Record summary:
Structure probing data (DMS and 2A3) for a 170-nucleotide construct. For DMS the reverse transcriptase was MarathonRT. For 2A3, 118,965 sequencing reads were counted. The reactions ran in a buffer of 150 mM KOAc, 10 mM MgCl2 and 150 mM bicine (pH 8.5), at 24 C. For DMS, 123,319 sequencing reads were counted.
[RMDB]
RNA sequence: GGGAACGACUCGAGUAGAGUCGAAAACCUUUGCCAUCCGAGGGAACUACGUUCUCCUUCGGAUGCCCAGGUCGGACCGCGAGGAGGUGGAGAUACCAUGCCGACCCGAAGAAGGAAAGGAGGACACAGCGUGUAACGUUCGCGUUACACAAAAGAAACAACAACAACAAC
Reactivity to DMS in 0.01 (KOAc 150mM, MgCl2 10mM, bicine 150mM(pH8.5), 24C), signal-to-noise 9, nucleotides 027 to 129: c000c030u010u020u010g010c170c020a000u030c000c030g010a030g010g000g010a010a020c090u060a160c210g030u040u020c100u020c000c020u020u000c020g020g000a010u000g000c020c020c060a050g010g010u000c070g030g020a110c060c020g000c080g020a070g020g010a040g000g040u010g010g000a090g000a100u040a100c070c080a070u020g030c020c030g000a080c070c050c050g000a070a050g010a030a020g010g010a030a030a040g000g020a050g000g000a060c120a050c120a100g040c180
Reactivity to 2A3 in 0.01 (KOAc 150mM, MgCl2 10mM, bicine 150mM(pH8.5), 24C), signal-to-noise 9, nucleotides 027 to 129: c000c000u030u070u110g050c030c010a010u000c000c000g000a010g020g010g000a020a020c030u140a100c280g110u140u030c060u020c050c000u020u030c000g000g000a000u000g000c000c010c000a030g000g020u040c030g030g030a070c010c020g020c030g030a060g020g020a010g000g020u060g020g010a080g010a020u120a100c020c040a040u120g040c000c020g030a040c000c000c010g030a040a030g010a010a010g030g000a030a020a010g030g010a010g010g010a010c050a010c020a090g110c060